[RMDB]
RNA sequence: GGGAACGACUCGAGUAGAGUCGAAAAGGUAGUUGUUCGCAACUACCAAAGCGACUCGGGGUGCCCUUCUGCGUGAAGGCUGAGAAAUACCCGUAUCACCUGAUCUGGAUAAUGCCAGCGUAGGGAAGUCGCAAAAAGGCACUUCUUCGGAAGUGCCGGUCUCGACCUGAUUCGUCAGGUCGAGACCAAAAGAAACAACAACAACAAC
Reactivity to 2A3 in 0.01 (KOAc 150mM, MgCl2 10mM, bicine 150mM(pH8.5), 24C), signal-to-noise 1, nucleotides 027 to 156: g000g010u000a000g000u010u030g040u110u040c300g030c120a000a000c030u000a000c000c000a020a020a000g000c010g000a000c000u000c050g010g010g020g000u000g020c000c010c000u000u020c000u050g080c100g100u220g040a000a000g000g050c010u000g020a000g020a010a240a030u300a100c030c000c000g030u070a040u230c080a020c010c000u030g010a080u120c000u010g010g000a030u030a280a010u220g170c000c000a000g000c000g000u050a000g000g000g000a000a010g000u000c000g000c040a000a000a050a050a080g010g070c000a000c030u000u040c020u070u080c200g150g000a010a000g000u000g000c010c000
Record summary
Chemical mapping of a 207-nucleotide RNA with 2A3. The data come from the RNA Mapping Database (RMDB), library PDB130.